[RMDB]
RNA sequence: GGGAACGACUCGAGUAGAGUCGAAAAUGCACAGCGCGAUGCGUUGGCGCUGCCGUAUCAGGGUAUGUCCCCUGAGGGACCGCCACCGCCGAAGGCGUUCGGCAGCUGAGUGUGCCGGCGACGAUGCUCGGGUCACCCACUUCGGUGGGUGACCCGAAAAAGAAACAACAACAACAAC
Reactivity to 2A3 in 0.01 (KOAc 150mM, MgCl2 10mM, bicine 150mM(pH8.5), 24C), signal-to-noise 2, nucleotides 027 to 126: u270g060c000a000c000a010g010c040g040c070g160a140u270g000c010g010u000u050g040g000c030g000c020u060g000c000c000g040u040a080u050c000a010g000g110g010u190a170u270g270u300c000c000c000c010u070g000a070g040g090g040a030c000c090g000c000c000a090c000c060g060c000c000g040a100a000g090g000c000g000u060u080c000g000g000c000a020g000c030u090g120a000g140u160g010u010g000c000c000g060g000c090g030a020c040g070a000u080g000c000
Notes:
Source: RMDB library OK1LIB, as collected in RNAgym. The record gives the reactivity of an RNA of 177 nucleotides to 2A3. Values cover nucleotides 27 to 126. For 2A3 the reverse transcriptase was SuperScript II with manganese. The 2A3 profile rests on 706 reads.